[RMDB]
RNA sequence: GGGAACGACUCGAGUAGAGUCGAAAAUGAUGAUUCGCUACUGCGGAUUAUCUGAAACGCACAGCGAUAUCUCCCUAUUUCUGGAGAAAAUGACGACUCCUCAGACGGAAGUAGCCAUCAUUAUUGGGUUGCUAAUCAUCUUCGGAUGAUUAGCAACAAAAGAAACAACAACAACAAC
Reactivity to DMS in 0.01 (KOAc 150mM, MgCl2 10mM, bicine 150mM(pH8.5), 24C), signal-to-noise 3, nucleotides 027 to 126: u000g000a030u000g000a020u000u000c040g040c000u000a140c290u000g020c030g030g000a160u010u000a090u010c060u030g010a020a090a170c050g010c020a030c080a020g010c020g010a060u010a060u000c060u000c010c010c120u000a120u000u010u010c090u000g000g010a040g010a030a030a080a070u000g000a090c080g000a100c030u010c020c020u010c060a060g000a170c170g000g000a060a030g010u000a040g000c020c020a040u000c060a070u000u000a090u000u020g000g010
Reactivity to 2A3 in 0.01 (KOAc 150mM, MgCl2 10mM, bicine 150mM(pH8.5), 24C), signal-to-noise 3, nucleotides 027 to 126: u080g000a000u030g010a000u070u010c030g010c050u140a110c050u200g020c040g030g060a050u090u060a090u080c070u070g010a100a080a010c020g000c000a060c020a060g020c020g040a020u030a060u140c000u010c020c010c010u040a170u030u150u060c090u070g040g000a050g020a010a120a070a060u150g090a080c020g040a080c010u000c030c030u010c020a050g000a070c070g050g020a020a050g020u050a020g030c010c010a030u050c020a030u040u130a100u140u180g110g050